[RMDB]
RNA sequence: GGGAACGACUCGAGUAGAGUCGAAAAAGUAGGAUGUACGCAUCCUACAUGGAAUGAUGAUAACGAUUUUUCGGAUAUAUUAAUUUAUUCUGUCGACCAAAACUCAGACUACAAUUAUCUGACUAAAGUUUCGCAUUGAGUUCGCUCAAUGCGAAACAAAAGAAACAACAACAACAAC
Reactivity to 2A3 in 0.01 (KOAc 150mM, MgCl2 10mM, bicine 150mM(pH8.5), 24C), signal-to-noise 4, nucleotides 027 to 126: a000g000u000a010g010g010a010u000g000u040a020c250g000c040a000u000c000c000u010a010c000a000u040g020g010a040a010u050g020a010u070g060a040u080a100a040c070g020a130u040u020u070u240u200c020g020g060a000u040a010u010a040u230u110a190a120u050u080u030a020u010u000c030u020g140u060c030g030a090c010c010a030a050a040a130c050u030c040a010g000a070c010u040a060c080a090a060u190u040a070u090c010u020g060a070c020u180a170a000a080
An RNA of 177 nucleotides, treated with 2A3 and read out base by base.
It was measured as part of the RMDB library RFM100.
For 2A3 the reverse transcriptase was SuperScript II with manganese.
The reactions ran in a buffer of 150 mM KOAc, 10 mM MgCl2 and 150 mM bicine (pH 8.5), at 24 C.
Values are in units of 0.01, from 0 to 300, in steps of 10.